[RMDB]
Source: RMDB library 15KREP, as collected in RNAgym. The record gives the reactivity of an RNA of 177 nucleotides to DMS and 2A3. Reactivities are rounded to 0.1 and cut off at 0 and 3. The 2A3 profile rests on 1,141 reads. Reactivities are given for positions 27 through 126. The RNA was probed in 150 mM KOAc, 10 mM MgCl2 and 150 mM bicine (pH 8.5) at 24 C. For 2A3 the reverse transcriptase was SuperScript II with manganese.

RNA sequence: GGGAACGACUCGAGUAGAGUCGAAAAUGACACUCCUAGCGUACUUCAAGCUACUCUUUCUGAGUUUUCACACUUAGCUACCUUUGCUGAGUUGGAAGCUGCGCAGAAAGCCUAUCAGGAAGCUAUGGCGAUCGUAAUAGUUCGCUAUUACGAUCGCAAAAGAAACAACAACAACAAC
Reactivity to DMS in 0.01 (KOAc 150mM, MgCl2 10mM, bicine 150mM(pH8.5), 24C), signal-to-noise 2, nucleotides 027 to 126: u020g030a150c250a080c160u000c030c040u000a050g020c040g020u000a070c050u030u010c040a070a060g000c120u000a090c130u000c030u000u000u000c020u010g000a020g010u000u000u000u010c000a060c240a010c000u010u000a000g000c000u010a130c290c290u020u000u020g000c000u000g000a010g000u010u000g010g000a000a010g010c040u000g000c160g020c090a010g000a000a030a030g020c200c080u000a070u010c050a050g000g010a060a080g000c250u010a030u000g030
Reactivity to 2A3 in 0.01 (KOAc 150mM, MgCl2 10mM, bicine 150mM(pH8.5), 24C), signal-to-noise 1, nucleotides 027 to 126: u090g030a020c060a000c050u010c000c010u000a000g030c020g020u020a050c000u050u040c020a060a000g010c050u030a040c030u020c000u020u040u020c010u080g020a000g000u000u010u010u010c040a080c000a000c040u000u000a000g010c010u090a070c030c090u170u180u120g020c010u000g000a000g000u010u020g010g000a000a000g010c020u010g050c140g020c040a000g030a050a000a000g000c000c000u130a140u060c000a010g000g130a030a020g000c070u070a040u140g050